[RMDB]
RNA sequence: GGGAACGACUCGAGUAGAGUCGAAAAAAACUUCACCAGAGUCAAGUCCAGACAAGUGGCCGAAGCAAGAUGCUUUAUCCUUUUUCGAUAAAGAACAAUAAGUUUGAGAAGUGGCAGGACAAGGGGGAGAAGUCACAAUUUUCGAAUUGUGACUUCUAAAAGAAACAACAACAACAAC
Reactivity to DMS in 0.01 (KOAc 150mM, MgCl2 10mM, bicine 150mM(pH8.5), 24C), signal-to-noise 2, nucleotides 027 to 126: a030a010a060c060u010u000c040a110c030c020a140g000a160g010u000c050a050a070g020u010c020c040a100g030a060c050a050a010g010u010g030g000c060c030g010a060a050g010c070a030a110g010a090u010g010c000u000u000u000a000u050c000c110u000u010u000u010u010c190g000a020u000a000a000a000g000a090a090c080a070a070u000a040a100g000u000u000u000g010a090g000a080a070g020u010g000g050c030a080g000g030a040c060a030a120g010g000g010g010g010